RNA sequence: GGGAACGACUCGAGUAGAGUCGAAAAGAACUGUCAAAGCUUAUCGAAUAAGUUGGUUUUCUUCUGUUUUAUCUUUGAGGCAGCCUUUCACGAAACAGAGUAUUAACGUGGAUGACAGAUAUUUAAGAAAUAUACCGUACUUCGGUACGGUAUAUUUAAAAGAAACAACAACAACAAC
Reactivity to DMS in 0.01 (KOAc 150mM, MgCl2 10mM, bicine 150mM(pH8.5), 24C), signal-to-noise 7, nucleotides 027 to 126: g000a060a070c030u010g010u010c020a060a140a060g010c010u000u010a040u020c190g020a110a300u020a010a030g010u000u010g000g010u010u010u000u000c030u020u000c010u010g000u000u000u000u020a050u010c060u000u010u000g000a090g010g010c030a030g000c050c010u000u000u010c020a020c050g010a050a060a080c130a110g000a100g010u020a070u020u020a070a080c050g020u010g000g010a090u010g000a020c040a030g000a210u020a060u030u030u040a090a100g000
Reactivity to 2A3 in 0.01 (KOAc 150mM, MgCl2 10mM, bicine 150mM(pH8.5), 24C), signal-to-noise 5, nucleotides 027 to 126: g030a030a020c020u030g010u050c020a040a050a040g020c010u070u060a040u210c090g160a190a120u110a080a010g020u030u070g060g050u010u070u090u000c000u050u000c010u020g120u030u080u050u100a070u140c050u050u110u110g030a030g000g000c040a020g000c000c010u060u070u050c040a030c020g050a030a090a020c080a040g080a020g100u140a160u120u110a090a030c050g000u030g020g050a030u060g010a000c000a000g060a060u070a100u130u180u050a100a060g050
The record gives the reactivity of an RNA of 177 nucleotides to DMS and 2A3.
DMS adducts were read by reverse transcription with MarathonRT.
The RNA was probed in 150 mM KOAc, 10 mM MgCl2 and 150 mM bicine (pH 8.5) at 24 C.
Values cover nucleotides 27 to 126.